[RMDB]
RNA sequence: GGGAACGACUCGAGUAGAGUCGAAAAAGUAUCUAAUUCGUUAGAUACUCGGGGACGGGUGAGGCGGCCGAGUGCGCAGACAGUGCUCCAGCCGCGCGCGCGAAUUUCGCCUAUUCGUAGGCGAAAAGCUCACUUGUUAUUUCGAUAACAAGUGAGCAAAAGAAACAACAACAACAAC
Reactivity to 2A3 in 0.01 (KOAc 150mM, MgCl2 10mM, bicine 150mM(pH8.5), 24C), signal-to-noise 1, nucleotides 027 to 126: a000g010u010a010u000c020u000a000a000u040u090c160g030u040u010a000g000a000u000a000c000u010c010g000g000g000g070a010c030g030g010g050u040g040a090g170g030c020g000g000c000c000g040a050g040u030g010c030g000c030a030g100a300c070a050g040u020g010c000u020c000c030a020g000c000c000g010c010g000c000g000c000g000c000g070a030a060u030u030u020c000g000c010c000u010a000u030u020c220g080u020a000g000g010c010g000a010a000a000a010
Reactivity to DMS in 0.01 (KOAc 150mM, MgCl2 10mM, bicine 150mM(pH8.5), 24C), signal-to-noise 2, nucleotides 027 to 126: a020g010u000a000u010c010u000a000a020u010u010c140g000u000u000a000g000a010u000a000c000u000c050g020g020g010g020a260c010g010g010g040u000g010a120g010g010c020g020g010c020c230g010a080g010u000g000c020g030c090a130g000a120c210a060g020u000g000c010u000c010c060a060g010c020c020g010c020g020c020g060c080g000c030g000a070a100u010u010u000c000g010c000c010u010a030u000u020c200g030u000a000g000g000c000g000a000a000a010a140